[RMDB]
RNA sequence: GGGAACGACUCGAGUAGAGUCGAAAAUGCGCGAGCUGCACGCCGCAGGCAAGUCGCGGAACGAGAUCGCCCGGGCACUGAAGCGCAGCCCGAGCACCGUGUCGAAGAUCGCCGCCGACCAGGGCCUCACCUUCGACCGCGCCCCGGUCGAGGCCGCCUUUCUACGCAAUUUCGAUUGCGUAGAAAGAAAAGAAACAACAACAACAAC
Reactivity to 2A3 in 0.01 (KOAc 150mM, MgCl2 10mM, bicine 150mM(pH8.5), 24C), signal-to-noise 1, nucleotides 027 to 156: u190g010c020g000c000g040a040g020c030u080g000c070a050c110g030c000c060g040c030a060g030g100c090a130a040g050u070c060g000c020g050g020a070a070c060g060a020g020a230u130c070g010c020c010c070g020g000g000c090a080c080u170g100a160a060g040c010g000c110a020g060c020c010c010g000a000g000c000a050c010c020g070u090g020u210c040g010a060a000g030a080u130c000g000c040c020g040c080c020g030a030c030c000a020g030g010g030c020c030u070c020a090c060c020u190u280c040g050a020c010c030g050c000g010c040c000c000c000g020g000u040c070g000a060g000g050c010c000g000c000